[RMDB]
RNA sequence: GGGAACGACUCGAGUAGAGUCGAAAAUGCGGUUGUGCAAAACGGUGUUAUUGCUGAGAAGGGAACGCAUGAGAGGUUGGUAAAGACCUCAAUGGAAUCUUAUGGUACUCUUUUUGCUCACAUGAGUUCCUCUUUGUUUCUUCGGAAACAAAGAGGAAAAAGAAACAACAACAACAAC
Reactivity to 2A3 in 0.01 (KOAc 150mM, MgCl2 10mM, bicine 150mM(pH8.5), 24C), signal-to-noise 2, nucleotides 027 to 126: u180g000c030g000g000u050u060g010u020g090c000a010a000a050a070c030g060g030u050g010u060u080a100u030u100g020c040u060g000a000g030a080a000g060g000g010a090a000c080g020c090a010u050g000a050g000a000g110g030u020u000g000g110u200a070a070a030g050a010c000c050u030c010a020a090u030g040g030a010a030u060c010u020u030a060u090g070g030u140a120c000u030c050u040u000u000u130u100g000c000u010c000a070c030a090u240g010a010g040u060
Reactivity to DMS in 0.01 (KOAc 150mM, MgCl2 10mM, bicine 150mM(pH8.5), 24C), signal-to-noise 1, nucleotides 027 to 126: u020g050c110g030g030u000u000g060u040g000c060a030a070a050a160c030g000g010u000g000u000u010a040u000u010g000c020u020g010a130g000a090a070g000g000g000a030a100c140g050c050a020u020g000a200g000a000g010g070u030u040g000g030u020a050a070a130g040a000c030c020u000c050a110a060u000g000g010a130a160u010c050u000u000a050u040g000g000u000a050c020u000c000u030u000u000u000u000g000c030u020c070a060c050a060u010g000a050g000u040
The record gives the reactivity of an RNA of 177 nucleotides to 2A3 and DMS. The data come from the RNA Mapping Database (RMDB), libraries RFM100 and RFMREP. 2A3 is a SHAPE reagent: it acylates the 2'-hydroxyl of flexible nucleotides of all four kinds. For DMS the reverse transcriptase was MarathonRT. The RNA was probed in 150 mM KOAc, 10 mM MgCl2 and 150 mM bicine (pH 8.5) at 24 C.